[RMDB]
Conditions: 150 mM KOAc, 10 mM MgCl2 and 150 mM bicine (pH 8.5), 24 C.
This 177-nucleotide RNA was probed chemically with DMS and 2A3.
For 2A3 the reverse transcriptase was SuperScript II with manganese.
RNA sequence: GGGAACGACUCGAGUAGAGUCGAAAACUAUCCUUCCUGGUGUGUUUACAAAUCGCGGAAGGUGCUUUGCACUAAGUUCUUUGAACCCGACAACUACACCAAGACUACCAUUUACGAGACCUGGGGCCAUGCCCCAUGAUUUCGAUCAUGGGGCAUGAAAAGAAACAACAACAACAAC
Reactivity to DMS in 0.01 (KOAc 150mM, MgCl2 10mM, bicine 150mM(pH8.5), 24C), signal-to-noise 6, nucleotides 027 to 126: c100u010a120u010c020c010u000u000c020c020u010g020g040u010g020u000g010u000u000u010a090c140a050a080a070u010c080g010c100g010g010a110a090g010g010u000g010c030u000u000u000g020c040a030c050u010a070a120g010u000u000c060u010u010u010g020a070a100c020c020c020g030a100c140a040a040c060u000a050c050a030c010c020a040a060g000a060c120u000a070c060c050a050u010u000u000a080c070g010a110g010a060c040c030u000g010g010g010g010c210
Reactivity to 2A3 in 0.01 (KOAc 150mM, MgCl2 10mM, bicine 150mM(pH8.5), 24C), signal-to-noise 4, nucleotides 027 to 126: c010u040a070u090c010c010u020u030c010c020u010g000g020u030g000u010g010u020u060u070a130c080a030a160a070u080c080g010c030g100g040a090a120g040g000u010g010c020u070u110u200g010c010a010c020u060a080a080g060u080u030c050u050u170u160g040a040a040c000c010c010g020a030c040a060a010c030u090a010c010a020c020c010a040a020g040a030c030u070a080c030c000a070u030u090u130a050c040g020a020g040a100c010c010u000g000g000g000g040c030